[RMDB]
RNA sequence: GGGAACGACUCGAGUAGAGUCGAAAAGAUUAGGUGUCCGUGAGGAAUCGAAACGAGGCACGAGAUUCCAAGGUCUCUGUAUCACGCCGUCUCGUGACGUCUCUCUAGUCACAUUCGGCAUAACAAACGUAUGUAGUUGGUUCGCCAACUACAUACGAAAAGAAACAACAACAACAAC
Reactivity to 2A3 in 0.01 (KOAc 150mM, MgCl2 10mM, bicine 150mM(pH8.5), 24C), signal-to-noise 4, nucleotides 027 to 126: g070a030u120u240a080g000g060u020g030u020c000c010g020u030g030a090g090g120a070a140u160c050g030a020a090a050c080g010a120g040g000c040a010c040g020a040g010a050u090u040c030c010a050a050g070g000u010c020u010c010u050g080u100a080u080c030a030c110g000c000c000g010u000c010u050c080g000u010g010a000c020g120u010c020u000c000u000c020u100a020g010u000c000a000c000a010u010u010c000g000g040c030a010u060a040a030c110a050a040a000
Reactivity to DMS in 0.01 (KOAc 150mM, MgCl2 10mM, bicine 150mM(pH8.5), 24C), signal-to-noise 3, nucleotides 027 to 126: g010a060u020u000a070g000g020u040g000u000c010c020g010u020g010a170g010g020a070a070u030c090g010a160a090a070c070g010a120g010g010c030a050c040g020a240g000a050u000u010c030c050a060a180g000g000u010c030u020c020u000g000u010a030u020c020a080c100g000c020c010g010u000c010u010c140g060u000g000a020c010g010u000c080u000c030u000c080u050a090g000u010c000a000c010a030u000u000c000g030g020c000a050u040a040a070c210a040a070a210